Structure probing data (2A3 and DMS) for a 177-nucleotide construct. 2A3 adducts were read by reverse transcription with SuperScript II with manganese. The 2A3 profile rests on 6,144 reads. The DMS profile rests on 2,317 reads. The reactions ran in a buffer of 150 mM KOAc, 10 mM MgCl2 and 150 mM bicine (pH 8.5), at 24 C.

RNA sequence: GGGAACGACUCGAGUAGAGUCGAAAAGAUAUGGAAAUGUAUUAUGGCUAUGAAGCUGGUCGGAAACGACCAGUGGAGCCAGUACACGUUUCCUAAGUCAAAAUCACCUUCCUUCGGGAAGGUGAAACCCCAUCAUAGAGUUCGCUCUAUGAUGGGGAAAAGAAACAACAACAACAAC
Reactivity to 2A3 in 0.01 (KOAc 150mM, MgCl2 10mM, bicine 150mM(pH8.5), 24C), signal-to-noise 3, nucleotides 027 to 126: g000a000u020a000u040g000g000a030a030a010u060g050u040a070u240u190a220u300g010g000c060u100a200u300g000a000a000g010c010u010g010g000u000c000g000g000a010a000a010c010g000a000c000c000a000g000u000g000g010a000g020c010c000a010g000u010a020c140a010c060g030u000u030u020c000c010u000a010a000g000u000c020a020a000a020a300u050c000a000c000c000u000u020c000c000u010u090c300g100g000g000a000a000g000g000u000g000a000a000a000
Reactivity to DMS in 0.01 (KOAc 150mM, MgCl2 10mM, bicine 150mM(pH8.5), 24C), signal-to-noise 3, nucleotides 027 to 126: g010a020u000a050u030g000g000a020a030a070u010g010u010a020u000u010a160u000g030g010c000u000a300u020g020a160a290g000c000u000g000g000u000c000g000g010a020a010a080c000g020a010c020c000a000g000u000g010g010a000g030c000c020a060g010u010a000c060a100c300g020u000u000u010c010c000u000a020a150g000u000c020a090a100a140a180u000c000a010c000c000u010u000c000c000u010u020c300g020g000g020a010a000g000g010u000g000a000a040a140